[RMDB]
RNA sequence: GGGAACGACUCGAGUAGAGUCGAAAAAGUGGCUAGUUCGCUAGCCACUAAAGACCGCACGGCAGGGGAAAUAAGCCGAAACGCAAACAGAAGCGACUGAAAGACUCCAAACAUUCGUGUUUGGAAAUAUCAUCCGUAUAUUCGUAUACGGAUGAUAAAAAGAAACAACAACAACAAC
Reactivity to 2A3 in 0.01 (KOAc 150mM, MgCl2 10mM, bicine 150mM(pH8.5), 24C), signal-to-noise 2, nucleotides 027 to 126: a000g000u020g000g000c010u000a000g010u020u050c080g030c110u000a000g000c000c000a000c000u000a000a000a010g020a040c000c000g000c070a030c030g010g000c010a040g000g040g100g110a060a200a230u210a230a000g010c000c010g040a050a020a000c030g000c020a090a050a170c040a120g100a130a010g010c010g070a040c050u090g070a060a070a050g030a050c070u010c010c000a000a020a000c010a010u070u130c140g110u010g000u030u000u040g030g000a010a040a010
Reactivity to DMS in 0.01 (KOAc 150mM, MgCl2 10mM, bicine 150mM(pH8.5), 24C), signal-to-noise 4, nucleotides 027 to 126: a050g020u010g020g020c010u000a000g010u000u020c220g020c000u000a010g000c020c000a010c000u010a020a080a080g000a220c030c040g020c080a060c040g020g020c020a110g000g000g000g000a090a080a110u000a090a110g020c010c020g010a050a100a090c110g000c020a040a090a120c130a080g010a120a080g010c010g010a060c130u000g000a060a060a070g000a130c110u000c000c010a010a020a010c010a040u010u010c180g010u000g000u000u000u000g000g000a010a060a080
Annotation: An RNA of 177 nucleotides, treated with 2A3 and DMS and read out base by base. DMS adducts were read by reverse transcription with MarathonRT. The data come from the RNA Mapping Database (RMDB), library M2PK50. Conditions: 150 mM KOAc, 10 mM MgCl2 and 150 mM bicine (pH 8.5), 24 C. 2A3 adducts were read by reverse transcription with SuperScript II with manganese. The DMS profile rests on 4,074 reads.